[RMDB]
This 207-nucleotide RNA was probed chemically with 2A3. The RNA was probed in 150 mM KOAc, 10 mM MgCl2 and 150 mM bicine (pH 8.5) at 24 C. For 2A3 the reverse transcriptase was SuperScript II with manganese. The 2A3 profile rests on 703 reads.
RNA sequence: GGGAACGACUCGAGUAGAGUCGAAAAAUGAAGUGGAGUGAUUUCGACGAAUUGCGCGAAGAAGUCGACCGCUUCAAUAAGUAAGUGCUUUUGUAAUAUUCGCAUCAAUUGAAGAUACAUGCCCAACAAUAAGGAUCGUUAAAUCUACGGUUGCGGAGCAUUGAGUCUGGUUCGCCAGACUCAAUGCAAAAGAAACAACAACAACAAC
Reactivity to 2A3 in 0.01 (KOAc 150mM, MgCl2 10mM, bicine 150mM(pH8.5), 24C), signal-to-noise 2, nucleotides 027 to 156: a000u050g000a010a000g000u040g010g030a200g070u240g030a030u030u000u010c030g020a050c030g050a090a140u300u300g050c190g030c030g050a060a060g020a020a010g030u010c010g010a060c000c000g010c010u000u000c000a000a040u160a040a010g100u020a060a040g010u010g050c030u090u090u120u100g100u060a150a110u060a180u150u120c050g000c020a010u010c040a150a130u100u160g050a150a000g060a040u040a080c060a040u140g040c000c000c010a120a070c090a020a090u120a110a050g050g010a050u050c020g010u100u080a090a120a010u000c050u030a000c020g060g020u080u020g030c000g030g020a010
Values cover nucleotides 27 to 156. It was measured as part of the RMDB library OK3TST.